[RMDB]
RNA sequence: GGGAACGACUCGAGUAGAGUCGAAAAACCUCGCUGUUUUCUUGGCUAACUUUCAGCGAGGUGAGGCAAGGCGGCAAAAAAAAGUUGGGAGCAGCAACGGCAAGCAAAAAAAAAGUUCCAGCCGAGGAUAGACGAUAUGCUUCGGCAUAUCGUCUAUAAAAGAAACAACAACAACAAC
Reactivity to 2A3 in 0.01 (KOAc 150mM, MgCl2 10mM, bicine 150mM(pH8.5), 24C), signal-to-noise 2, nucleotides 027 to 126: a000c000c000u000c000g000c010u000g020u020u010u010u020c100u120u190g020g000c010u020a010a030c010u000u030u030c000a000g000c000g000a010g010g000u000g010a070g030g090c080a060a030g060g000c040g020g000c070a020a080a000a020a000a000a030a060g050u070u060g030g010g040a030g020c020a000g000c010a040a050c020g050g030c000a020a030g010c030a020a050a010a000a000a000a050a010a000g030u050u030c060c030a010g000c000c010g000a040g070g070
Reactivity to DMS in 0.01 (KOAc 150mM, MgCl2 10mM, bicine 150mM(pH8.5), 24C), signal-to-noise 2, nucleotides 027 to 126: a030c000c000u000c010g000c010u000g010u000u020u000u010c030u050u010g020g030c090u030a050a020c040u000u040u000c000a000g030c000g010a020g000g000u000g000a080g000g030c040a100a050g000g000c000g040g000c040a000a000a000a030a020a030a080a040g020u000u000g010g010g000a100g050c010a020g010c100a050a080c130g000g030c010a070a070g030c060a000a000a000a000a000a030a000a010a050g030u020u000c210c100a060g020c060c010g010a150g010g000